Chemical mapping of a 177-nucleotide RNA with DMS and 2A3.
For 2A3 the reverse transcriptase was SuperScript II with manganese.
For 2A3, 2,914 sequencing reads were counted.
For DMS, 2,060 sequencing reads were counted.
RNA sequence: GGGAACGACUCGAGUAGAGUCGAAAAAAAAAAGAUAUGGAGAACGGACAUGGAAGAGAACUACAUCUACCAUAUCGGAAACGAUAUGAUGAUGCUCUUCCAACAGCCGUUCUCCUAAGUCAAAAAAGAUAGGUAAUGAGUUCGCUCAUUACCUAUCAAAAGAAACAACAACAACAAC
Reactivity to DMS in 0.01 (KOAc 150mM, MgCl2 10mM, bicine 150mM(pH8.5), 24C), signal-to-noise 2, nucleotides 027 to 126: a000a020a060a120a020a220g010a000u000a200u000g020g010a010g000a020a000c000g010g000a110c120a150u010g000g060a020a030g000a010g010a110a050c190u010a300c050a020u000c000u010a050c130c010a000u010a010u000c000g020g000a040a010a120c000g000a000u000a000u000g000a050u000g000a030u000g060c020u000c000u010u000c000c000a030a040c200a140g000c000c010g000u000u000c000u000c000c000u000a020a040g000u010c010a050a010a100a060a140a080
Reactivity to 2A3 in 0.01 (KOAc 150mM, MgCl2 10mM, bicine 150mM(pH8.5), 24C), signal-to-noise 1, nucleotides 027 to 126: a000a000a030a010a030a000g040a020u070a030u050g000g000a020g000a010a010c000g020g080a030c090a200u230g060g000a000a010g040a000g000a090a020c100u250a090c300a000u000c000u020a100c030c000a000u000a010u010c000g010g000a020a020a000c000g000a000u010a000u010g000a000u010g000a000u000g010c020u000c000u000u000c010c000a010a000c020a000g020c000c010g000u000u000c000u000c000c000u000a000a000g000u000c010a000a010a000a040a060a030